[RMDB]
RNA sequence: GGGAACGACUCGAGUAGAGUCGAAAACGCGAUGGCGGCGCUGGGCGCGAGGACCGCCCAGGGAUUGAGGAGCAGCCCGGAGGCGUUGUCGCGGACCAUGUUCGCCCAGUUGUCGUCGGACAGGGCAUCACCAGUACCCUUUCGAGGGUACUGGUGAAAAAGAAACAACAACAACAAC
Reactivity to 2A3 in 0.01 (KOAc 150mM, MgCl2 10mM, bicine 150mM(pH8.5), 24C), signal-to-noise 2, nucleotides 027 to 126: c060g010c040g060a060u140g010g010c020g000g030c000g020c000u010g010g040g010c000g000c030g020a120g060g040a010c050c000g000c000c030c000a010g020g000g000a070u070u160g100a110g010g120a120g090c020a000g020c040c060c040g010g060a150g000g010c090g020u040u110g060u030c030g020c020g120g020a030c040c010a050u100g100u050u130c010g000c020c010c000a010g060u230u260g000u000c010g020u040c000g000g040a020c030a030g120g000g000c010a030
Reactivity to DMS in 0.01 (KOAc 150mM, MgCl2 10mM, bicine 150mM(pH8.5), 24C), signal-to-noise 1, nucleotides 027 to 126: c060g010c070g020a170u000g010g030c000g000g020c000g010c010u000g010g010g010c000g000c060g000a250g020g000a090c040c010g000c020c040c000a220g000g020g040a100u000u000g000a200g000g000a100g010c060a160g010c020c000c040g000g000a160g000g000c010g010u010u010g000u000c050g000c030g010g000a110c040c070a080u000g010u010u010c010g030c000c000c000a090g010u000u000g020u000c000g010u010c070g010g010a110c120a070g010g010g000c170a150